[RMDB]
Description
An RNA of 207 nucleotides, treated with 2A3 and DMS and read out base by base. Reactivities are given for positions 27 through 156. The reactions ran in a buffer of 150 mM KOAc, 10 mM MgCl2 and 150 mM bicine (pH 8.5), at 24 C. The DMS profile rests on 4,755 reads. 2A3 is a SHAPE reagent: it acylates the 2'-hydroxyl of flexible nucleotides of all four kinds.

RNA sequence: GGGAACGACUCGAGUAGAGUCGAAAAGCGCAAAUCCACAAACGCCAACGAUGAGCGUUUCGCUGUAGCCGCUUAAGGCAACAGCCGGGGCCGCCUGAGCCCUGUUACCAAAGACGGCUGGCGCGGGUAAUUACUUAUUGCUUCGGCAAUAAGUAAAGUCUUAGUAUCAGUUCGCUGAUACUAAGACAAAAGAAACAACAACAACAAC
Reactivity to 2A3 in 0.01 (KOAc 150mM, MgCl2 10mM, bicine 150mM(pH8.5), 24C), signal-to-noise 5, nucleotides 027 to 156: g030c020g000c020a050a070a050u050c050c030a070c070a080a090a010c030g010c020c030a110a040c140g120a120u150g030a040g050c010g010u020u060u090c050g000c010u020g000u040a040g000c000c010g070c200u250u200a160a100g000g000c000a030a010c000a020g000c000c020g000g000g000g010c010c090g030c010c020u030g020a000g000c000c000c010u020g060u050u070a030c010c010a020a010a000g020a020c010g010g000c010u060g060g000c030g000c040g040g030g040u080a120a110u040u010a010c000u000u000a010u010u000g000c000u010u030c150g080g000c000a000a000u000a000a000g000u000a000a000a000
Reactivity to DMS in 0.01 (KOAc 150mM, MgCl2 10mM, bicine 150mM(pH8.5), 24C), signal-to-noise 3, nucleotides 027 to 156: g030c020g010c010a050a130a100u020c040c050a130c070a040a210a020c010g020c010c010a080a150c160g020a120u000g020a200g020c020g020u000u010u000c050g030c000u020g060u000a080g010c030c010g000c120u000u010a150a200g000g050c010a040a020c020a030g000c020c050g000g010g030g040c010c060g020c080c080u010g000a180g000c000c000c010u000g010u000u000a120c050c030a040a130a150g000a150c160g020g000c030u000g020g010c020g030c030g000g020g010u000a060a130u000u000a020c000u010u000a010u000u000g020c000u000u020c300g050g000c020a030a040u000a010a010g010u000a000a020a100